RNA sequence: GGGAACGACUCGAGUAGAGUCGAAAAGAAGAGUUUUAGAAUACAUAAGAUGAUAAUACAAAAGAUGAGGAUGAUAGCAGAAAAAAUGAAUAUUGACUUAAGUACAUUAAUGCGGAUGCUUCUUGCUAAAGCGAUCUACUAUAGCCAAUAUGAGGAACAUCGUUACAAUGUUCGCAUUGUAACGAUGAAAAGAAACAACAACAACAAC
Reactivity to DMS in 0.01 (KOAc 150mM, MgCl2 10mM, bicine 150mM(pH8.5), 24C), signal-to-noise 3, nucleotides 027 to 156: g040a100a150g010a100g010u010u000u000u010a100g000a140a150u010a110c040a080u010a060a070g020a110u000g000a120u000a070a100u000a160c030a040a090a080a100g000a060u010g010a040g020g010a060u020g010a060u000a020g000c050a070g000a000a000a080a090a090a080u020g000a110a080u000a040u000u000g000a040c010u000u010a090a070g030u000a030c040a080u000u000a060a110u000g020c020g010g030a150u000g020c000u000u010c060u000u000g020c100u010a040a110a130g020c030g020a060u000c050u010a050c010u000a100u000a020g010c010c010a030a080u000a060u020g000a060g010g030a110a150
Reactivity to 2A3 in 0.01 (KOAc 150mM, MgCl2 10mM, bicine 150mM(pH8.5), 24C), signal-to-noise 7, nucleotides 027 to 156: g080a020a010g060a000g020u050u080u080u170a100g040a120a060u140a110c050a040u140a070a100g010a030u110g020a020u070a180a040u110a180c060a050a150a010a020g030a030u040g010a000g010g000a000u060g020a010u080a030g000c030a020g110a060a070a000a010a010a020u120g030a060a020u040a020u040u030g000a000c000u030u040a060a010g010u020a010c010a080u070u180a160a050u170g010c010g000g010a010u060g020c020u060u140c050u130u250g000c020u130a090a000a000g010c010g010a010u000c000u020a010c010u030a020u080a070g000c000c000a030a020u030a030u090g050a050g030g030a030a020

An RNA of 207 nucleotides, treated with DMS and 2A3 and read out base by base. It was measured as part of the RMDB library OK3TST. The reactions ran in a buffer of 150 mM KOAc, 10 mM MgCl2 and 150 mM bicine (pH 8.5), at 24 C. For 2A3, 5,207 sequencing reads were counted.